Structure probing data (DMS and 2A3) for a 207-nucleotide construct. 2A3 adducts were read by reverse transcription with SuperScript II with manganese. Values cover nucleotides 27 to 156. For DMS the reverse transcriptase was MarathonRT.

RNA sequence: GGGAACGACUCGAGUAGAGUCGAAAAAACCGAUUCGUCGGUUCCAGAAGGGGUCGAAUUUCUCCGAGGCUUUUGACGAGCUGAAGCCUCCACGGCUCGAUAAGCUACCCACCGGAGAAUUCGACGGAGGCACCCAUGAUACGGGAUUCGUCCCGAAAAUUUCGAUUCAAUUCGUUGAAUCGAAAUUAAAAGAAACAACAACAACAAC
Reactivity to DMS in 0.01 (KOAc 150mM, MgCl2 10mM, bicine 150mM(pH8.5), 24C), signal-to-noise 2, nucleotides 027 to 156: a010a060c010c000g000a050u000u000c190g020u010c010g000g000u000u010c030c030a210g010a190a090g000g010g010g030u000c020g000a050a070u010u000u010c030u000c000c010g000a210g010g030c010u000u000u000u000g020a230c050g000a050g050c000u000g020a130a130g010c000c000u010c010c020a300c030g000g000c000u020c000g000a170u000a020a030g010c000u000a050c030c030c050a300c050c000g000g010a050g010a070a030u010u000c010g030a030c010g000g000a030g110g000c020a090c010c010c010a120u010g000a220u010a170c030g000g010g000a080u010u010c130g000u010c010c010c000g010a000a030
Reactivity to 2A3 in 0.01 (KOAc 150mM, MgCl2 10mM, bicine 150mM(pH8.5), 24C), signal-to-noise 3, nucleotides 027 to 156: a010a010c000c000g000a030u020u030c130g040u010c010g070g020u020u060c010c000a080g190a200a090g070g040g040g010u020c000g010a010a000u190u300u090c010u000c010c000g040a110g050g040c050u130u150u240u300g180a090c040g000a000g010c000u020g010a080a010g020c010c000u000c000c010a020c010g000g000c000u000c000g020a070u030a160a020g000c040u050a070c120c080c120a090c050c030g000g010a000g000a000a000u000u000c000g000a000c000g000g000a000g000g020c000a010c000c010c000a050u180g050a050u160a170c050g010g020g010a010u070u130c160g030u010c030c000c000g040a160a030